RNA sequence: GGGAACGACUCGAGUAGAGUCGAAAAUGAGGCUUUCGAGAAAUUCGUAAGUCUCUUUGCUACUUUAAUGACUUUUUCUGGUAAUGUAGAUCUUGAUGCGUUAGCUAGUGAUAUUUUUGACACUCCUACAUAUUACAGGGUUCGCCCUGUAAUAUGUAAAAGAAACAACAACAACAAC
Reactivity to 2A3 in 0.01 (KOAc 150mM, MgCl2 10mM, bicine 150mM(pH8.5), 24C), signal-to-noise 7, nucleotides 027 to 126: u080g010a000g000g010c010u000u020u030c030g010a020g050a090a300a120u150u010c000g020u010a010a000g010u000c000u000c000u020u030u020g010c000u020a060c010u080u110u140a100a070u140g080a080c010u120u070u030u070u050c030u070g060g020u080a060a060u080g040u050a030g010a080u010c020u030u100g040a050u070g050c010g020u040u030a010g030c030u020a020g020u010g070a040u020a130u120u080u030u020u070g030a020c010a020c060u020c000c000u010
Reactivity to DMS in 0.01 (KOAc 150mM, MgCl2 10mM, bicine 150mM(pH8.5), 24C), signal-to-noise 5, nucleotides 027 to 126: u000g010a020g020g000c010u000u000u000c000g010a000g010a140a120a180u010u000c000g000u000a010a010g010u000c000u000c000u000u010u000g010c040u000a060c070u000u010u000a060a080u000g010a110c110u010u000u000u000u000c030u000g010g010u010a050a050u010g010u000a030g000a040u000c040u000u000g010a080u010g000c040g010u000u000a060g010c120u000a070g010u000g010a080u000a010u000u000u000u000u000g010a100c150a100c110u000c040c030u000